Structure probing data (DMS and 2A3) for a 177-nucleotide construct.

[RMDB]
RNA sequence: GGGAACGACUCGAGUAGAGUCGAAAACUACAUCUUCUGACGUUAGCCAGGAAUGCCUCCCGCCGCUUACAAAUUUCUCUCAACUCCGACACAGUUCUAACGUCUAAGUUCAAAAUUUCGGUGAGAAGAGCAUAUCGUGAUUCGUCACGAUAUGCUCAAAAGAAACAACAACAACAAC
Reactivity to DMS in 0.01 (KOAc 150mM, MgCl2 10mM, bicine 150mM(pH8.5), 24C), signal-to-noise 2, nucleotides 027 to 126: c030u000a040c280a120u010c070u040u000c110u000g020a040c060g000u000u010a010g040c290c080a130g020g000a040a060u000g000c040c010u000c030c000c000g000c010c070g000c130u000u000a120c050a060a090a170u030u000u000c020u000c010u020c010a090a050c120u040c050c000g030a050c050a040c090a150g000u010u000c010u000a050a070c030g010u040c030u020a020a040g030u020u030c030a090a060a090a210u000u000u020c020g020g000u000g000a040g030a100a030
Reactivity to 2A3 in 0.01 (KOAc 150mM, MgCl2 10mM, bicine 150mM(pH8.5), 24C), signal-to-noise 4, nucleotides 027 to 126: c050u080a040c010a100u060c020u110u020c020u020g030a030c010g010u040u040a000g040c060c020a050g050g100a070a040u140g050c010c020u060c020c020c010g000c020c030g050c050u040u060a050c080a040a210a190u040u120u040c050u000c010u000c000a030a120c040u000c010c000g040a020c020a000c020a060g040u130u040c030u050a080a020c010g000u010c040u030a060a050g020u050u130c090a040a020a120a200u070u150u080c020g010g030u090g040a070g020a120a030

The reactions ran in a buffer of 150 mM KOAc, 10 mM MgCl2 and 150 mM bicine (pH 8.5), at 24 C. High 2A3 reactivity points to a flexible backbone, as in loops and unpaired stretches.